[RMDB]
RNA sequence: GGGAACGACUCGAGUAGAGUCGAAAAGAGGAGUCAUUCGUGACUCCUCAAAGGGAGCUCAACUCUGCCGCUCAAGUCCGAGAGCCUUCGGACCCAAAAGAAUGCUGUUCCUGUUCGCAGGAACAAACGUGUUAUUUAUCUUCGGAUAAAUAACACGAAAAGAAACAACAACAACAAC
Reactivity to DMS in 0.01 (KOAc 150mM, MgCl2 10mM, bicine 150mM(pH8.5), 24C), signal-to-noise 5, nucleotides 027 to 126: g010a010g010g000a020g020u000c010a040u000u000c180g020u000g010a020c000u000c000c010u000c000a010a040a050g010g010g000a090g010c040u010c080a080a100c080u000c030u000g010c040c080g000c030u000c030a090a110g010u010c010c010g000a030g010a130g020c130c080u010u000c010g000g000a060c000c060c040a070a080a080a070g000a080a090u010g010c150u000g010u000u000c000c000u010g000u000u010c160g040c020a010g010g000a000a010c020a010a030a110
Reactivity to 2A3 in 0.01 (KOAc 150mM, MgCl2 10mM, bicine 150mM(pH8.5), 24C), signal-to-noise 6, nucleotides 027 to 126: g000a000g020g000a000g010u010c010a010u080u110c150g100u090g000a000c000u000c000c000u000c000a000a010a000g000g010g010a030g020c010u030c080a020a080c050u030c040u100g060c040c020g030c010u020c050a060a020g020u000c010c010g030a030g010a070g210c030c010u060u020c000g020g010a030c000c010c000a060a100a010a010g160a110a060u170g060c070u040g040u000u000c000c000u000g020u020u030c270g000c040a000g000g000a010a010c020a010a030a000